[RMDB]
Source: RMDB library OK3TST, as collected in RNAgym.
This 207-nucleotide RNA was probed chemically with 2A3.
RNA sequence: GGGAACGACUCGAGUAGAGUCGAAAAAGCUACAUUGGGAGGCUGAGGUGGAAGGAUCGCUUGAGGCCAGGAGUUCAAGGCUGCAGUGAGCUAUGAUCAUGCCACUGUAUUCCAGCCUGAGUGACAGAGUGAGACCCUGUCUCUAAAAUUAAAAAAAGAUAAAAUUAUCAUUCGUGAUAAUUUUAUCAAAAGAAACAACAACAACAAC
Reactivity to 2A3 in 0.01 (KOAc 150mM, MgCl2 10mM, bicine 150mM(pH8.5), 24C), signal-to-noise 1, nucleotides 027 to 156: a020g050c050u080a050c020a100u040u110g060g020g000a000g020g000c030u020g010a040g040g000u000g010g020a020a030g060g020a040u140c030g050c030u040u060g040a040g020g040c000c000a010g000g000a070g000u130u130c060a070a010g000g010c020u000g000c010a000g000u020g070a120g000c040u070a110u230g070a130u120c040a050u140g040c000c000a010c010u010g000u040a060u150u000c030c000a010g000c000c000u000g010a010g040u070g000a010c030a030g020a010g010u010g010a060g020a050c010c010c000u000g010u000c000u000c000u020a170a100a030a040u160u280a030a070a190a060a000a080a000

The reactions ran in a buffer of 150 mM KOAc, 10 mM MgCl2 and 150 mM bicine (pH 8.5), at 24 C.
For 2A3, 669 sequencing reads were counted.
Reactivities are rounded to 0.1 and cut off at 0 and 3.